[RMDB]
RNA sequence: GGGAACGACUCGAGUAGAGUCGAAAACUGGGAUCGCCGACUGGCAAAAACGCUACCCGCAAAAUCCGGGGGCGAAAAUGCUGCCGACGCAGCUCGUCAAUGUACAACGUUUCAAACCGGCUUCCACACGACGUAUUAGGUUCGCCUAAUACGUCGUAAAAGAAACAACAACAACAAC
Reactivity to 2A3 in 0.01 (KOAc 150mM, MgCl2 10mM, bicine 150mM(pH8.5), 24C), signal-to-noise 5, nucleotides 027 to 126: c010u030g010g010g050a040u070c070g000c020c010g030a060c040u030g030g030c040a000a000a000a000a100c020g030c020u260a300c010c010c020g100c110a140a100a010a100u070c020c000g000g000g000g010g000c010g030a140a030a000a000u110g010c030u020g000c020c070g020a040c090g010c020a040g010c030u040c020g040u050c030a060a110u110g020u080a070c050a130a020c160g010u010u040u100c070a110a080a030c010c000g000g000c000u060u000c010c010a070c010
Reactivity to DMS in 0.01 (KOAc 150mM, MgCl2 10mM, bicine 150mM(pH8.5), 24C), signal-to-noise 2, nucleotides 027 to 126: c040u020g020g000g000a000u010c010g020c000c030g040a110c130u020g030g000c010a040a040a060a040a130c010g040c050u000a060c000c010c040g000c250a090a070a100a260u000c300c030g010g020g040g000g080c000g000a060a000a040a130u030g000c110u000g040c050c090g030a040c040g040c130a100g000c010u000c050g000u000c050a040a080u040g030u080a010c070a000a000c160g010u000u000u030c070a030a110a100c080c030g000g000c030u000u000c050c020a080c290
This 177-nucleotide RNA was probed chemically with 2A3 and DMS. For DMS, 2,032 sequencing reads were counted. Conditions: 150 mM KOAc, 10 mM MgCl2 and 150 mM bicine (pH 8.5), 24 C. 2A3 adducts were read by reverse transcription with SuperScript II with manganese.